Chemical mapping of a 207-nucleotide RNA with 2A3 and DMS.
RNA sequence: GGGAACGACUCGAGUAGAGUCGAAAAGAUGCGCUGGUGCGUGUCAGUGCGCAACAGGCAAAACUUAACGCAGUAAAACAGCGUUAUCAGGCCGGAAAGGAACUGGCCGGAAAUAUGGCCUCAGUGGGCGCUGCCGGUGUGGGGAUUGCGGCGGCGGAAUCUCGGUACAAUUCGUUGUACCGAGAUUAAAAGAAACAACAACAACAAC
Reactivity to 2A3 in 0.01 (KOAc 150mM, MgCl2 10mM, bicine 150mM(pH8.5), 24C), signal-to-noise 2, nucleotides 027 to 156: g020a060u130g000c120g020c050u010g040g040u040g020c030g000u070g120u100c100a060g070u160g090c000g020c030a030a030c010a080g020g060c020a050a100a000a000c040u040u040a010a010c000g010c010a040g030u140a050a020a050a000c000a010g000c000g010u010u020a040u100c050a040g000g000c010c020g040g030a140a070a050g110g050a080a060c040u010g020g010c040c020g030g020a070a080a000u160a030u040g030g030c000c020u010c040a040g030u160g010g000g000c030g000c010u000g000c000c010g000g040u080g040u060g060g010g000g000a070u040u240g040c000g010g010c010g000g020c010g000g030
Reactivity to DMS in 0.01 (KOAc 150mM, MgCl2 10mM, bicine 150mM(pH8.5), 24C), signal-to-noise 1, nucleotides 027 to 156: g000a230u000g000c090g010c000u000g010g040u000g030c000g050u010g030u000c160a030g050u000g040c000g020c000a110a080c050a050g040g000c040a070a000a070a180c040u020u000a000a010c010g060c030a230g000u000a040a070a110a230c160a180g020c040g000u000u000a070u000c030a200g050g060c000c000g000g000a050a100a040g000g020a130a110c050u010g000g000c000c010g030g000a090a030a120u000a040u000g000g010c020c050u010c030a060g030u000g010g010g060c040g010c050u000g060c080c000g030g040u000g050u000g010g060g000g000a210u010u000g030c050g000g010c040g050g050c020g020g010
For DMS, 1,734 sequencing reads were counted. The reactions ran in a buffer of 150 mM KOAc, 10 mM MgCl2 and 150 mM bicine (pH 8.5), at 24 C. 2A3 is a SHAPE reagent: it acylates the 2'-hydroxyl of flexible nucleotides of all four kinds.